[RMDB]
RNA sequence: GGGAACGACUCGAGUAGAGUCGAAAAGUAAGGGCAGCCACUGGAUCGUGAGAUUUGGCAUGGGGGCCGCCAUCAUGCUGGCUGUCUGGGCGCUGCACGCCUAUGCCCCAGACAAGGGUGCGGUCCGUCCCACGGCUAUUUUCGAAUAGCCGUGGGAAAAAGAAACAACAACAACAAC
Reactivity to DMS in 0.01 (KOAc 150mM, MgCl2 10mM, bicine 150mM(pH8.5), 24C), signal-to-noise 1, nucleotides 027 to 126: g020u010a050a140g000g010g050c000a040g020c020c060a140c140u020g010g030a070u000c010g040u010g020a210g000a100u000u000u000g000g010c020a070u000g010g000g020g030g050c010c080g000c000c050a070u010c130a030u010g010c050u000g000g020c020u000g010u000c030u010g010g000g040c140g030c030u010g030c120a160c060g000c070c010u030a050u000g020c050c030c010c020a070g000a040c080a070a100g000g000g020u000g000c020g030g020u000c020c080g020
Chemical mapping of a 177-nucleotide RNA with DMS. Values cover nucleotides 27 to 126. Conditions: 150 mM KOAc, 10 mM MgCl2 and 150 mM bicine (pH 8.5), 24 C.